[RMDB]
RNA sequence: GGGAACGACUCGAGUAGAGUCGAAAAUUUGGGAUUCAAUCUUAAGUUCUAUCAUGUGAGGAAAAGAGCUGAAAAAUUGACGGCAAAACUUGAGAGUGAUCAUACUAAUUUGGGAGUGAAGCUGAUUGAGGUAUAUGAAGUUUCUGAGCCAACCAGAAAAGCAGGUUAUUUUCGAAUAACCUGCUUUAAAAGAAACAACAACAACAAC
Reactivity to DMS in 0.01 (KOAc 150mM, MgCl2 10mM, bicine 150mM(pH8.5), 24C), signal-to-noise 2, nucleotides 027 to 156: u000u000u000g020g010g030a170u000u000c040a070a090u010c010u000u000a090a060g010u000u000c020u000a100u010c040a130u000g000u020g030a180g010g000a090a070a150a100g000a070g010c040u010g000a030a080a070a080a130u000u000g020a210c050g000g000c030a030a050a100a060c030u010u010g020a070g010a070g000u000g000a100u000c070a070u010a100c090u000a030a090u010u000u000g050g010g020a140g000u010g000a020a040g020c020u000g010a100u000u010g000a070g020g050u000a040u000a080u020g000a050a200g010u000u000u000c060u000g000a030g010c070c030a040a120c000c010a200g000a110
Reactivity to 2A3 in 0.01 (KOAc 150mM, MgCl2 10mM, bicine 150mM(pH8.5), 24C), signal-to-noise 2, nucleotides 027 to 156: u090u070u050g020g000g020a030u130u130c020a010a060u050c020u120u150a040a050g020u090u000c050u060a060u170c070a060u100g090u120g130a120g020g030a010a050a020a120g030a000g020c030u040g020a080a120a000a000a100u100u090g020a030c010g000g040c010a050a020a060a020c040u020u030g000a000g000a000g090u090g020a050u070c020a030u020a150c050u070a100a110u020u030u190g040g050g010a090g030u070g020a040a020g000c100u010g040a080u060u090g030a060g000g050u040a060u020a010u120g010a050a040g000u020u060u000c020u010g000a020g000c020c000a010a060c010c000a030g030a080